[RMDB]
RNA sequence: GGGAACGACUCGAGUAGAGUCGAAAACGGAGAACAACCUCUCGGUCUCUUUCAGGACUGCGGCCUAAACGUUUGUGAUGAUGAUGUAGUCGUAAUAGUCUUCAGAUAUAGAUUUAAGUCAUUCAUGGUUGUGUAAACUAGAUGAUACAGAUGAAUGCGCAUUGUGUUAGUUCGCUAACACAAUGCGAAAAGAAACAACAACAACAAC
Reactivity to DMS in 0.01 (KOAc 150mM, MgCl2 10mM, bicine 150mM(pH8.5), 24C), signal-to-noise 2, nucleotides 027 to 156: c050g010g010a090g000a100a080c040a120a120c070c040u000c020u010c040g020g000u000c010u000c040u000u000u020c090a070g020g010a060c030u000g000c070g000g000c030c040u010a040a040a120c080g040u010u000u000g000u000g010a090u010g030a110u000g020a100u000g030u010a070g040u020c070g020u000a090a120u010a090g000u000c000u000u000c030a130g020a100u020a130u000a120g000a130u020u000u000a080a140g000u000c000a030u010u000c010a080u020g000g040u000u030g000u000g030u000a110a050a040c000u010a070g000a060u000g010a080u000a130c060a040g010a170u000g010a130a100u000g020
Reactivity to 2A3 in 0.01 (KOAc 150mM, MgCl2 10mM, bicine 150mM(pH8.5), 24C), signal-to-noise 2, nucleotides 027 to 156: c020g030g000a020g010a060a070c030a030a080c020c020u000c050u040c030g050g000u030c020u010c000u060u160u060c120a060g020g010a010c000u000g010c010g020g020c010c070u200a180a130a040c090g000u050u090u030g040u050g070a080u030g000a020u000g020a020u060g070u030a060g030u000c010g000u000a040a110u020a210g020u000c000u040u040c140a010g100a080u090a080u110a100g050a130u060u120u110a100a010g030u040c000a050u030u020c010a010u030g070g070u050u000g030u050g070u180a040a070a070c070u060a110g000a160u120g020a040u140a080c030a030g060a000u040g010a050a020u090g000